Notes:
Chemical mapping of a 177-nucleotide RNA with 2A3 and DMS. It was measured as part of the RMDB library OK2TST. Conditions: 150 mM KOAc, 10 mM MgCl2 and 150 mM bicine (pH 8.5), 24 C. For 2A3 the reverse transcriptase was SuperScript II with manganese. For 2A3, 3,609 sequencing reads were counted. The DMS profile rests on 6,194 reads.
RNA sequence: GGGAACGACUCGAGUAGAGUCGAAAAAGCCGUGAGCGUUUUGACAGUCUCGGAAACAAAAAUGCGCUGUUUGGUAUCAUCCAGGGCAGCGUUUACGAAGAUUUACGUGAUAUUUCUGUUAAAGGUCACACUCAUUAGGUUUCGACCUAAUGAGUGUAAAAGAAACAACAACAACAAC
Reactivity to 2A3 in 0.01 (KOAc 150mM, MgCl2 10mM, bicine 150mM(pH8.5), 24C), signal-to-noise 3, nucleotides 027 to 126: a000g060c040c000g050u060g020a090g030c040g020u020u060u060u070g040a020c010a020g040u000c010u010c010g000g030a070a070a000c060a030a110a060a020a030u090g000c020g000c010u010g030u040u020u030g060g000u120a190u300c050a040u030c020c020a040g020g060g000c000a000g000c000g000u000u010u020a040c030g050a040a050g020a080u070u050u100a030c030g010u040g090a040u030a080u180u160u020c020u020g040u030u060a060a090a010g030g040u030c040
Reactivity to DMS in 0.01 (KOAc 150mM, MgCl2 10mM, bicine 150mM(pH8.5), 24C), signal-to-noise 5, nucleotides 027 to 126: a100g020c020c020g030u000g010a130g030c070g000u000u010u000u000g020a040c050a060g000u000c040u000c010g000g010a050a040a050c060a010a070a060a100a050u010g000c010g020c000u000g010u000u000u000g000g020u000a150u000c180a100u010c010c010a040g020g010g000c000a010g000c010g010u000u000u000a040c130g010a160a120g000a100u010u000u010a070c030g000u010g000a120u010a080u010u000u000c020u000g010u010u000a050a070a070g000g010u010c080